[RMDB]
RNA sequence: GGGAACGACUCGAGUAGAGUCGAAAAUGGAGAGGAUUGCUGAAGACACCUCCGGGGCAGCUGUCUACAAGCAAGAAUAGUCCAGCCGAGGUCCCAAAGUAGAAACCUGUCUGGGAAAGGAUGCACCGACAAUCUAAAACUUCGGUUUUAGAUUGUCAAAAGAAACAACAACAACAAC
Reactivity to 2A3 in 0.01 (KOAc 150mM, MgCl2 10mM, bicine 150mM(pH8.5), 24C), signal-to-noise 1, nucleotides 027 to 126: u050g020g000a090g030a060g090g000a040u020u070g060c060u040g070a110a060g030a020c000a000c000c000u020c030c080g000g070g000g050c040a090g000c030u000g040u010c000u050a060c030a140a000g020c000a060a010g040a140a090u060a050g120u050c010c010a010g060c030c000g050a090g020g040u050c000c010c020a060a060a000g030u120a020g080a040a130a000c010c020u040g030u030c040u090g030g000g060a050a050a000g070g050a060u080g050c010a010c040c080
Reactivity to DMS in 0.01 (KOAc 150mM, MgCl2 10mM, bicine 150mM(pH8.5), 24C), signal-to-noise 2, nucleotides 027 to 126: u000g010g020a090g000a100g000g010a210u000u020g040c020u010g000a150a130g010a090c030a030c090c030u010c090c090g020g000g010g020c220a060g000c170u000g000u000c010u000a080c140a140a050g020c010a030a050g000a140a140u000a110g000u000c010c000a050g010c040c020g000a060g000g000u000c000c010c010a050a080a110g020u010a070g010a060a080a090c100c040u000g000u000c020u000g000g020g000a090a040a080g010g000a060u000g000c110a100c150c140